[RMDB]
RNA sequence: GGGAACGACUCGAGUAGAGUCGAAAAAAAAAGGCACUUCAGGUGGCUCUGGGGCGAAAGUACUGACGACAGACCAGAAGCGGGAAGCCGAUGAGUUUAUGUGUGAUGCGACCGGUCUGUCGAAAAAUACUGAAAGAUAGUUCGCUAUCUUUCAGUAAAAAGAAACAACAACAACAAC
Reactivity to DMS in 0.01 (KOAc 150mM, MgCl2 10mM, bicine 150mM(pH8.5), 24C), signal-to-noise 4, nucleotides 027 to 126: a000a060a070a070a130g000g000c030a010c050u010u000c040a050g010g020u000g000g000c060u000c040u000g000g010g000g010c160g000a050a030a050g010u000a110c080u000g000a180c030g000a010c000a020g010a020c010c000a050g020a060a250g000c000g000g000g010a100a150g010c010c020g000a050u010g010a120g020u010u010u000a030u030g010u010g010u000g010a150u000g000c030g010a250c030c040g000g000u000c010u000g000u010c000g010a000a020a070a050a070
Reactivity to 2A3 in 0.01 (KOAc 150mM, MgCl2 10mM, bicine 150mM(pH8.5), 24C), signal-to-noise 2, nucleotides 027 to 126: a000a000a050a000a030g040g000c010a000c020u050u020c020a010g000g030u030g000g050c010u010c050u050g020g010g000g010c020g000a030a020a000g040u040a040c030u050g050a010c010g000a000c000a000g010a020c000c010a010g010a040a000g020c020g010g060g040a060a010g040c040c030g070a110u150g090a050g090u070u170u100a120u130g160u000g020u050g050a050u130g010c010g020a020c000c020g000g000u000c000u020g000u010c000g000a000a000a000a000a000
This 177-nucleotide RNA was probed chemically with DMS and 2A3. The reactions ran in a buffer of 150 mM KOAc, 10 mM MgCl2 and 150 mM bicine (pH 8.5), at 24 C. DMS adducts were read by reverse transcription with MarathonRT. The 2A3 profile rests on 3,821 reads. It was measured as part of the RMDB library M2PK90.